[RMDB]
This 177-nucleotide RNA was probed chemically with DMS.
The RNA was probed in 150 mM KOAc, 10 mM MgCl2 and 150 mM bicine (pH 8.5) at 24 C.
Source: RMDB library RFMREP, as collected in RNAgym.
For DMS the reverse transcriptase was MarathonRT.
RNA sequence: GGGAACGACUCGAGUAGAGUCGAAAACUCCGUCCGGAAAUACUUGUCAUCAAAAUGGAUAAAAGGGGAUGUAUCUAGACAUAUUUUAGUUCUAGAUACAUCUCUUUUUAGUCACUUUGAUGACAAGCUACUCUUUGAGGUUCGCCUCAAAGAGUAGAAAAGAAACAACAACAACAAC
Reactivity to DMS in 0.01 (KOAc 150mM, MgCl2 10mM, bicine 150mM(pH8.5), 24C), signal-to-noise 1, nucleotides 027 to 126: c060u000c030c050g000u020c060c080g010g000a070a130a070u000a200c000u000u000g000u000c000a000u000c010a000a010a010a010u000g000g000a020u000a000a000a020a000g000g010g010g000a010u000g030u000a010u000c000u000a010g010a030c030a210u010a200u030u010u000u010a120g010u010u000c000u000a000g000a000u000a000c000a000u000c000u000c000u000u000u000u000u000a010g010u000c000a000c030u000u000u010g000a020u000g010a000c000a000a000g000